Conditions: 150 mM KOAc, 10 mM MgCl2 and 150 mM bicine (pH 8.5), 24 C. The record gives the reactivity of an RNA of 177 nucleotides to 2A3 and DMS. Reactivities are given for positions 27 through 126.

RNA sequence: GGGAACGACUCGAGUAGAGUCGAAAAGAAAGAAAUCAAAGCGGAUUCUAGUUCGAAUAACUCGUUCUUGACUAAUCGGAGAGACUAGCAAUAUCCGUAUUAGAUCUAACUGAGGGAUGAGUAGAAAGGGAAACAUACAGUUCGCUGUAUGUUUCCCAAAAGAAACAACAACAACAAC
Reactivity to 2A3 in 0.01 (KOAc 150mM, MgCl2 10mM, bicine 150mM(pH8.5), 24C), signal-to-noise 3, nucleotides 027 to 126: g090a020a060a000g070a010a070a030u140c050a110a040a000g190c010g080g000a010u050u050c000u050a050g130u120u040c010g070a060a100u090a150a020c020u000c010g050u100u000c000u060u040g020a030c030u020a050a020u000c000g050g010a000g000a000g040a070c050u040a020g070c060a040a030u020a020u140c000c000g000u010a000u000u020a000g030a070u000c020u040a000a170c080u160g030a110g000g030g050a030u060g030a000g040u040a010g100a050a050a040
Reactivity to DMS in 0.01 (KOAc 150mM, MgCl2 10mM, bicine 150mM(pH8.5), 24C), signal-to-noise 2, nucleotides 027 to 126: g000a090a110a160g010a090a090a070u020c050a010a160a300g010c090g000g000a020u000u000c010u000a020g030u030u020c020g000a010a110u040a150a080c220u000c050g000u010u000c080u000u030g060a020c020u000a000a040u020c060g000g000a020g000a150g000a030c180u000a110g000c230a090a080u020a060u000c000c000g000u100a040u010u000a050g000a150u010c070u010a050a060c130u010g000a020g010g000g010a070u020g030a040g000u040a050g000a120a100a130

2A3 is a SHAPE reagent: it acylates the 2'-hydroxyl of flexible nucleotides of all four kinds. For DMS the reverse transcriptase was MarathonRT. Source: RMDB library OK1LIB, as collected in RNAgym.